[RMDB]
RNA sequence: GGGAACGACUCGAGUAGAGUCGAAAACAAAGCAAGAAAGCUCUCCAAAAGUUCAACGUAAGCAAAUAGAACGGCUCAGACACAAAAGAGUACCCACUGGUAAAGAAAAUAUUACAGUUUGUUUUGGACCAAGAGGACCAGAACAAAAUUUUGGUAGUCAAUUGAUCACUUUCGAGUGAUCAAUUGAAAAAGAAACAACAACAACAAC
Reactivity to 2A3 in 0.01 (KOAc 150mM, MgCl2 10mM, bicine 150mM(pH8.5), 24C), signal-to-noise 1, nucleotides 027 to 156: c010a010a020a030g080c030a000a050g000a130a090a000g080c020u050c060u050c000c030a190a000a040a000g030u080u060c030a050a080c090g050u150a080a070g010c000a020a000a230u080a060g080a090a020c050g020g000c030u090c060a000g080a110c020a000c030a080a230a060a060g050a020g020u020a030c040c000c000a060c060u070g100g040u060a060a010a030g050a010a180a110a020u230a020u110u120a000c000a030g010u000u030u000g000u000u000u000u000g000g010a010c010c010a100a040g060a300g130g010a030c000c000a000g000a020a000c020a020a020a000a030u080u160u100u160g070g000u020a030g060
Chemical mapping of a 207-nucleotide RNA with 2A3.
High 2A3 reactivity points to a flexible backbone, as in loops and unpaired stretches.
The data come from the RNA Mapping Database (RMDB), library OK3TST.
Values cover nucleotides 27 to 156.